[RMDB]
RNA sequence: GGGAACGACUCGAGUAGAGUCGAAAAGCUGAGGUAGGAGGAUCGCUUGAGCCCAGGAGUUCUGGGCUGCAGUGUGCUCUGCCAUUCGGGUAUCUGCACCAAGUUCAGCAACAAUAUGGUGAACUCCUCUUCAGUACGACUUCGGUCGUACUGAAGAAAAAGAAACAACAACAACAAC
Reactivity to 2A3 in 0.01 (KOAc 150mM, MgCl2 10mM, bicine 150mM(pH8.5), 24C), signal-to-noise 1, nucleotides 027 to 126: g050c040u030g010a000g020g040u130a070g010g150a020g040g070a090u090c060g000c010u060u080g080a000g000c010c000c000a030g050g070a150g120u210u160c010u060g000g000g010c010u000g010c000a000g000u030g010u000g070c000u030c000u040g040c000c000a060u070u150c080g090g000g000u020a100u080c020u030g000c010a000c040c020a030a030g000u020u060c030a080g090c010a020a020c050a110a100u170a120u200g080g000u030g000a020a000c010u000c010c030
Reactivity to DMS in 0.01 (KOAc 150mM, MgCl2 10mM, bicine 150mM(pH8.5), 24C), signal-to-noise 1, nucleotides 027 to 126: g020c070u000g000a040g000g000u000a050g040g050a050g010g020a080u010c060g010c000u010u000g030a090g000c030c000c010a020g020g020a180g000u000u010c000u010g000g010g000c000u000g010c060a070g000u000g010u000g010c040u000c020u000g010c000c010a180u010u000c090g000g000g000u000a030u010c030u000g010c050a160c060c070a080a090g010u000u000c050a030g010c080a050a090c160a080a070u000a120u020g010g010u000g020a050a080c070u000c040c030